[RMDB]
RNA sequence: GGGAACGACUCGAGUAGAGUCGAAAAUAGGCAUUUGGUGCAUAUUACGGAUUCGGGGCGCGCAUUGUAUGAGGAAUUAUCGGUGUUGGUAGCGCAGGCGGAAGCCCAAGUGUUGGCGGCUGCGGGUGAUGUGACAACAGCGCAGGCGAUGCUGCGAGCAUAGCGAUAUCUUCGGAUAUCGCUAUGCAAAAGAAACAACAACAACAAC
Reactivity to DMS in 0.01 (KOAc 150mM, MgCl2 10mM, bicine 150mM(pH8.5), 24C), signal-to-noise 1, nucleotides 027 to 156: u000a060g010g000c030a050u010u000u010g060g040u070g000c000a090u010a080u000u010a150c040g000g020a140u000u010c000g020g010g030g020c010g020c060g000c040a130u000u010g040u000a060u010g010a090g050g030a060a110u010u020a120u000c040g050g000u010g000u000u010g020g020u050a040g030c050g030c070a070g010g050c010g020g040a070a140g020c010c020c030a040a150g040u000g010u000u010g030g020c010g000g030c000u010g010c040g000g030g010u030g000a070u000g010u000g000a110c000a010a090c020a090g000c000g020c040a060g000g040c010g000a120u000g020c000u000g030c030g010a140
Reactivity to 2A3 in 0.01 (KOAc 150mM, MgCl2 10mM, bicine 150mM(pH8.5), 24C), signal-to-noise 2, nucleotides 027 to 156: u100a020g010g020c050a070u030u040u160g070g000u000g030c080a040u080a060u200u210a110c110g000g050a060u030u090c010g040g000g000g000c010g020c010g020c030a020u020u070g070u120a060u110g000a040g070g060a070a060u080u030a070u170c070g020g000u020g000u070u110g020g010u060a020g030c010g000c080a020g010g050c000g020g000a020a000g010c000c010c020a060a070g070u030g010u040u070g020g010c020g010g020c020u030g020c050g010g020g010u030g030a060u050g000u030g050a020c000a050a040c010a130g060c000g000c040a020g020g040c000g040a030u090g010c020u030g050c000g040a030